[RMDB]
RNA sequence: GGGAACGACUCGAGUAGAGUCGAAAACAAAAACAGGACUGUAAAGAAAAGACGCGAAAAAGUGCACAAAAAGAAGUGCACAACAGUCCAAGCAAAAUGCCGCGUCAAAAACAAAAACAAAACAAAACGACACAGUACGAUUCGUCGUACUGUGUCGAAAAGAAACAACAACAACAAC
Reactivity to 2A3 in 0.01 (KOAc 150mM, MgCl2 10mM, bicine 150mM(pH8.5), 24C), signal-to-noise 2, nucleotides 027 to 126: c010a000a090a060a000a030c100a030g010g000a000c000u040g010u130a150a130a010g090a090a070a000a000g020a000c000g000c000g110a060a000a020a030a160g020u040g010c020a000c000a000a110a040a000a000g130a140a000g000u000g000c000a000c000a000a040c000a000g000u000c000c000a000a040g000c000a070a100a070a100u130g060c020c010g020c000g050u010c000a020a000a020a000a020c120a020a070a000a040a030c060a000a100a010a000c040a060a080a070a130